[RMDB]
RNA sequence: GGGAACGACUCGAGUAGAGUCGAAAAUUCGAUCCGGACCGGCUCAUCUCGGCAAGGGGCGGCAGUCCUCAGUGCUCUUACUCUUUCCUAUAAAGAGGAGACUGCUGGACUCGCCGCCCGAGCCCGACACCAGCGAGCUUCGGCUCGCUGAAAAGAAACAACAACAACAAC
Reactivity to DMS in 0.01 (KOAc 150mM, MgCl2 10mM, bicine 150mM(pH8.5), 24C), signal-to-noise 3, nucleotides 027 to 129: u030u010c090g020a120u020c000c000g000g000a070c090c040g000g000c010u050c060a100u040c120u030c060g000g020c080a060a070g080g050g070g010c030g070g000c020a000g010u010c030c000u010c030a000g000u040g020c000u020c030u070u100a300c060u000c000u000u000u000c230c260u100a060u170a050a030a040g010a020g070g000a040g000a000c010u020g020c180u140g060g010a010c060u000c300g040c020c010g000c000c010c000g010a100g050c000c030c000g040a080c170a060c090
Reactivity to 2A3 in 0.01 (KOAc 150mM, MgCl2 10mM, bicine 150mM(pH8.5), 24C), signal-to-noise 3, nucleotides 027 to 129: u050u040c060g010a050u020c080c070g000g000a010c020c000g000g000c010u000c000a100u020c020u030c030g010g000c000a040a080g060g000g000g000c000g010g000c000a000g000u000c000c000u000c030a040g000u120g210c000u010c000u090u220a270c000u020c030u000u010u050c020c060u130a120u220a220a030a000g000a010g000g000a000g020a000c000u000g070c130u000g010g010a000c000u000c060g030c000c000g010c000c000c000g000a000g020c000c000c000g030a030c030a050c040
Description:
Structure probing data (DMS and 2A3) for a 170-nucleotide construct. DMS adducts were read by reverse transcription with MarathonRT. The reactions ran in a buffer of 150 mM KOAc, 10 mM MgCl2 and 150 mM bicine (pH 8.5), at 24 C.